[RMDB]
RNA sequence: GGGAACGACUCGAGUAGAGUCGAAAAAAGGGAGGAUCGGAUGGGAAGAGUAUAUCCUACGGGAAUCCCCCGGUCCCUCUCACGUCCAGCCCCUCCCCGUGUCUAGUGAAGGGAGACUCCGGGACUCCUGCAUAUAUACGUUCGCGUAUAUAUGCAGAAAAGAAACAACAACAACAAC
Reactivity to DMS in 0.01 (KOAc 150mM, MgCl2 10mM, bicine 150mM(pH8.5), 24C), signal-to-noise 3, nucleotides 027 to 126: a060a070g000g000g000a060g010g000a030u000c030g000g010a150u010g030g000g010a060a100g010a200g010u010a090u010a130u010c120c060u000a080c100g050g000g020a140a130u000c000c000c010c000c000g020g000u000c060c020c030u000c010u000c020a070c120g000u000c020c020a140g000c050c010c000c010u010c000c000c010c050g020u000g000u000c050u000a070g000u010g030a100a090g000g010g000a050g010a030c020u000c060c040g020g010g000a120c070u000c070
Reactivity to 2A3 in 0.01 (KOAc 150mM, MgCl2 10mM, bicine 150mM(pH8.5), 24C), signal-to-noise 1, nucleotides 027 to 126: a010a020g020g000g010a110g010g000a030u050c030g010g050a100u180g100g020g000a080a070g100a060g300u070a060u010a050u180c030c020u010a030c140g080g020g060a030a090u000c000c000c000c000c000g020g000u000c040c040c000u010c000u010c000a080c050g070u000c020c010a040g030c010c000c010c000u020c000c010c030c000g020u040g010u060c040u040a060g060u030g210a090a010g050g040g020a020g000a020c020u020c070c040g030g020g000a030c020u030c010

Chemical mapping of a 177-nucleotide RNA with DMS and 2A3. The data come from the RNA Mapping Database (RMDB), library VIROID. For 2A3, 1,883 sequencing reads were counted. 2A3 adducts were read by reverse transcription with SuperScript II with manganese.